[RMDB]
RNA sequence: GGGAACGACUCGAGUAGAGUCGAAAACGUAACCGUGUGAGGCCAACAUCAAAGAUGCGUACCUAGCUGCGUUUCAACCUGCGUGGGUUGAGGCGGCUUAGCGGAUUAGGGCGUUCUGCCCCAGUGGUACCAUUACCCUAUGCAAAGUCUGCAUGCAUCUACCUUGCCAGUUCGCUGGCAAGGUAGAAAAAGAAACAACAACAACAAC
Reactivity to 2A3 in 0.01 (KOAc 150mM, MgCl2 10mM, bicine 150mM(pH8.5), 24C), signal-to-noise 2, nucleotides 027 to 156: c060g040u040a050a070c040c000g030u050g080u060g040a130g000g100c090c040a080a020c020a120u180c120a180a080a090g060a060u120g030c030g030u080a230c000c000u010a020g030c000u010g010c020g020u000u110u000c010a010a020c000c010u180g080c150g170u300g050g030g000u030u010g000a020g040g000c000g030g010c030u030u050a040g000c010g000g060a030u080u110a030g030g020g000c060g090u300u070c040u100g000c000c000c000c000a010g070u080g030g000u050a030c010c000a020u020u080a100c030c000c050u090a060u040g010c040a090a000a040g080u030c030u060g020c000a020u030g000c000a000
Structure probing data (2A3) for a 207-nucleotide construct. Conditions: 150 mM KOAc, 10 mM MgCl2 and 150 mM bicine (pH 8.5), 24 C. It was measured as part of the RMDB library VIROID. Values cover nucleotides 27 to 156.